[RMDB]
RNA sequence: GGGAACGACUCGAGUAGAGUCGAAAAACUCUAGACGGCCUUGAGAUAUUUCAGCCUGGAAAGGAGUGUAUGGGGUGUACCAUGCAGGAUUCUCGAUAACGUUACGAAGCAUUACAGGUGGUGUGCCGAUUUUAGGCGCAUUCGUGCGCCUAAAAUCAAAAGAAACAACAACAACAAC
Reactivity to DMS in 0.01 (KOAc 150mM, MgCl2 10mM, bicine 150mM(pH8.5), 24C), signal-to-noise 2, nucleotides 027 to 126: a090c020u000c040u000a060g000a170c100g010g020c060c120u040u010g000a040g000a110u020a040u000u000u000c010a210g010c070c000u000g000g020a070a090a100g000g000a030g010u010g020u000a030u020g000g000g000g000u010g020u050a060c000c020a050u010g000c000a100g000g000a030u010u000c000u000c000g000a060u010a040a150c050g000u000u040a070c080g000a080a060g000c050a050u040u000a070c130a050g000g020u000g000g000u020g000u020g000c010c060